Description:
Source: RMDB library OK2TRN, as collected in RNAgym. Chemical mapping of a 177-nucleotide RNA with 2A3 and DMS. The DMS profile rests on 5,401 reads. High 2A3 reactivity points to a flexible backbone, as in loops and unpaired stretches. The RNA was probed in 150 mM KOAc, 10 mM MgCl2 and 150 mM bicine (pH 8.5) at 24 C.

RNA sequence: GGGAACGACUCGAGUAGAGUCGAAAAGAACAUCGACGCCCGAACGAUAUUGCCGGCGUUGCGCUCGAUUUCGGUCAUGAUGGUGUCACAGCUGUUCUCAUGGAAAAUCUGGACGCCGCGCACAGGAAGAUAUAGACGAGUUCGCUCGUCUAUAUCUAAAAGAAACAACAACAACAAC
Reactivity to 2A3 in 0.01 (KOAc 150mM, MgCl2 10mM, bicine 150mM(pH8.5), 24C), signal-to-noise 4, nucleotides 027 to 126: g010a080a040c020a080u080c030g040a040c070g050c010c020c010g020a050a030c020g040a050u050a110u170u280g060c050c000g010g000c030g020u010u050g030c020g000c040u020c030g010a020u010u050u060c110g060g030u100c030a030u060g030a040u070g010g030u040g030u050c030a030c010a130g020c010u060g090u200u070c040u010c080a030u070g010g040a040a040a030a040u010c070u080g040g020a020c000g010c050c000g020c030g000c020a080c010a030g080g020a040
Reactivity to DMS in 0.01 (KOAc 150mM, MgCl2 10mM, bicine 150mM(pH8.5), 24C), signal-to-noise 5, nucleotides 027 to 126: g000a110a100c150a040u000c020g010a060c070g000c030c030c020g010a100a080c070g010a040u000a080u010u000g010c040c040g000g000c020g010u000u000g010c070g000c040u000c060g020a060u000u000u000c120g010g010u000c030a050u000g010a040u010g000g020u000g010u000c230a100c140a170g010c040u000g010u000u000c160u000c030a060u020g000g000a080a030a030a030u010c030u010g010g000a040c010g010c010c050g000c070g010c050a070c150a130g000g010a140